[RMDB]
RNA sequence: GGGAACGACUCGAGUAGAGUCGAAAAAGCGUAUCGCCGCAUAUAUAUAGCGUAUGCGAUAGCGCGCGCGUAUAUAUAUUAUAUAGCGCGCUAUUAUCGCGCGGCGUAUCGCCGCAUAAUAUAUGCGUACCAUCAAGUGUUUCGACACUUGAUGGUAAAAAGAAACAACAACAACAAC
Reactivity to 2A3 in 0.01 (KOAc 150mM, MgCl2 10mM, bicine 150mM(pH8.5), 24C), signal-to-noise 2, nucleotides 027 to 126: a000g050c050g030u100a080u150c030g000c030c000g000c090a010u060a010u000a010u000a020u070a160g070c060g050u060a060u270g060c060g010a010u010a020g000c000g000c010g000c000g010c060g020u000a000u010a010u000a010u000a080u180u080a010u050a010u050a030g010c000g000c000g000c000u000a010u000u020a020u000c010g000c010g010c010g050g000c020g000u020a100u150c040g010c030c030g000c010a010u070a170a070u060a070u000a000u050g000c000g000
Reactivity to DMS in 0.01 (KOAc 150mM, MgCl2 10mM, bicine 150mM(pH8.5), 24C), signal-to-noise 3, nucleotides 027 to 126: a110g000c020g000u000a130u000c040g030c050c010g000c000a080u000a050u010a040u000a110u000a170g010c110g010u010a070u010g010c050g000a010u000a000g010c250g010c010g010c010g010c110g010u000a010u000a000u000a140u020a120u020u000a020u000a020u010a150g000c000g000c000g000c000u000a000u000u000a020u000c010g020c000g020c010g010g000c040g000u000a070u010c040g010c020c010g030c000a040u000a040a080u000a040u010a010u000g010c000g010